[RMDB]
RNA sequence: GGGAACGACUCGAGUAGAGUCGAAAAAGUAAGCACUGUGAGCGCUCUUGUCUACAAUAAUAAAUUGUUAGCCAAGAAGGAGCUUUCAGGCCAGUGCUUUAAAAUACUCUAUAAGGGCAAUGUGACGGGAUCCAUGGCUUCGGCCAUGGAAAAAGAAACAACAACAACAAC
Reactivity to 2A3 in 0.01 (KOAc 150mM, MgCl2 10mM, bicine 150mM(pH8.5), 24C), signal-to-noise 3, nucleotides 027 to 129: a000g120u070a000a000g050c060a010c090u010g070u040g100a010g000c040g000c000u020c000u000u000g000u000c000u010a000c010a000a000u130a100a060u180a100a290a020u050u010g020u040u110a000g010c000c000a010a010g090a070a050g030g030a080g000c000u050u120u120c100a030g090g020c010c000a040g030u020g000c000u040u000u000a000a000a000a000u140a000c000u040c030u030a030u010a110a080g000g000g000c010a040a090u100g010u060g050a070c050g010g010g030a000
Reactivity to DMS in 0.01 (KOAc 150mM, MgCl2 10mM, bicine 150mM(pH8.5), 24C), signal-to-noise 3, nucleotides 027 to 129: a000g020u000a080a030g060c010a000c000u000g010u020g020a040g000c060g010c050u010c000u010u000g010u020c010u020a030c030a050a010u050a120a150u010a130a010a070u000u040g020u000u060a010g020c070c000a020a000g070a060a080g050g040a110g000c030u020u010u030c130a120g000g000c150c020a000g060u010g060c050u000u000u000a030a050a090a130u030a060c040u050c040u030a000u020a090a190g000g010g100c080a100a070u030g030u040g030a100c030g010g030g060a110